RNA sequence: GGGAACGACUCGAGUAGAGUCGAAAAGCGAUGCGGGAUGAACCGAACGCAAAGUUAAAGUGCCAAAAUGCUCGCUCACCUAGAUACCAUAAAAGGUGUUGGUUCAUUUAGACAGCAGGACGGUGGCCCUUUUAAUAUGGUUCGCCAUAUUAAAAGGAAAAGAAACAACAACAACAAC
Reactivity to 2A3 in 0.01 (KOAc 150mM, MgCl2 10mM, bicine 150mM(pH8.5), 24C), signal-to-noise 7, nucleotides 027 to 126: g010c020g020a020u100g010c020g020g020g020a070u090g040a080a040c020c020g010a020a010c020g000c040a050a020a000g010u060u110a210a060a040g070u080g060c030c000a010a070a020a060u070g010c010u020c060g010c010u020c010a020c000c000u020a040g040a180u150a120c030c070a070u150a170a130a020a020g000g010u020g020u040u030g000g010u020u010c010a010u040u030u030a070g020a070c030a020g030c010a010g030g020a010c030g020g040u030g030g020c000
Reactivity to DMS in 0.01 (KOAc 150mM, MgCl2 10mM, bicine 150mM(pH8.5), 24C), signal-to-noise 9, nucleotides 027 to 126: g010c020g010a200u010g010c020g000g000g000a120u010g010a090a070c030c010g000a100a130c060g010c050a050a050a220g010u000u000a040a100a100g010u010g020c030c040a040a040a110a080u010g000c020u000c070g010c040u000c040a060c020c010u000a060g000a100u010a080c110c090a070u010a070a080a100a060g000g000u000g000u000u000g010g010u000u000c030a050u000u000u000a080g010a080c090a050g010c050a030g010g000a180c070g010g020u000g010g010c080

Conditions: 150 mM KOAc, 10 mM MgCl2 and 150 mM bicine (pH 8.5), 24 C. Chemical mapping of a 177-nucleotide RNA with 2A3 and DMS. DMS adducts were read by reverse transcription with MarathonRT. Source: RMDB library RFMREP, as collected in RNAgym. The 2A3 profile rests on 13,722 reads.